[RMDB]
RNA sequence: GGGAACGACUCGAGUAGAGUCGAAAAACACCGAACUAGGCGUACGCGCCUAGUCCGGUGAGGGUCAGACGAGCAGACACCCAUUGAAGUUCUGCUCUACCGUUAAAAGGAAGUAAACCAUCAUGAAAGAAGUGCGCUUGGUUCGCCAAGCGCACAACUGGAUUAAUGUGUUCGCACAUUAAUCCAGAAAAGAAACAACAACAACAAC
Reactivity to 2A3 in 0.01 (KOAc 150mM, MgCl2 10mM, bicine 150mM(pH8.5), 24C), signal-to-noise 1, nucleotides 027 to 156: a000c000a000c000c000g010a020a000c000u000a000g030g040c000g030u010a010c280g060c000g030c120c000u010a000g000u000c000c000g000g000u030g000a070g000g000g000u040c030a040g010a300c000g010a090g000c000a020g010a000c000a000c000c030c050a060u070u190g060a000a010g020u060u020c010u010g000c020u000c000u000a000c000c000g060u050u070a010a020a000a200g000g060a060a000g070u180a000a170a170c080c040a060u240c070a110u270g080a090a060a150g080a140a000g060u000g030c050g000c000u000u000g020g000u070u140c110g020c020c000a000a000g000c030g000c000a010c010a000a000